Record summary
An RNA of 177 nucleotides, treated with 2A3 and DMS and read out base by base.
RNA sequence: GGGAACGACUCGAGUAGAGUCGAAAAGAAUCGCAGUUCGCUGCGAUUCAAAUAAAAUCAGCGGUAAGGACGCGUAAAAUAUUACCGCUGAACGCCUCCUUAAAACUACGUCCUUCGGGACGUAGAAUCUGUCUCUCUAGUUCGCUAGAGAGACAGAAAAAGAAACAACAACAACAAC
Reactivity to 2A3 in 0.01 (KOAc 150mM, MgCl2 10mM, bicine 150mM(pH8.5), 24C), signal-to-noise 1, nucleotides 027 to 126: g000a000a010u000c000g010c000a000g040u050u070c150g040c110u010g000c000g000a000u010u000c000a000a010a000u050a000a010a000a040u000c000a000g020c000g040g000u000a000a010g120g090a040c090g030c090g280u100a060a070a140a080u200a020u010u010a000c000c000g000c000u000g010a010a000c020g040c010c020u060c010c020u100u190a020a100a030a030c000u010a000c010g010u000c000c000u020u050c200g040g000g000a020c000g000u000a000g010a000a030
Reactivity to DMS in 0.01 (KOAc 150mM, MgCl2 10mM, bicine 150mM(pH8.5), 24C), signal-to-noise 1, nucleotides 027 to 126: g000a050a010u000c000g040c010a040g010u030u000c300g020c000u000g000c000g050a000u010u000c000a010a030a060u010a050a050a120a100u000c020a020g000c000g000g000u000a040a000g000g060a060c180g000c300g000u010a090a060a120a090u010a060u000u000a000c000c000g010c000u000g000a000a040c150g060c120c070u000c040c040u000u000a030a120a080a240c000u000a000c000g000u000c000c020u000u010c180g030g000g030a010c000g010u000a000g000a020a020
The data come from the RNA Mapping Database (RMDB), library M2PK50. High 2A3 reactivity points to a flexible backbone, as in loops and unpaired stretches. For DMS, 852 sequencing reads were counted.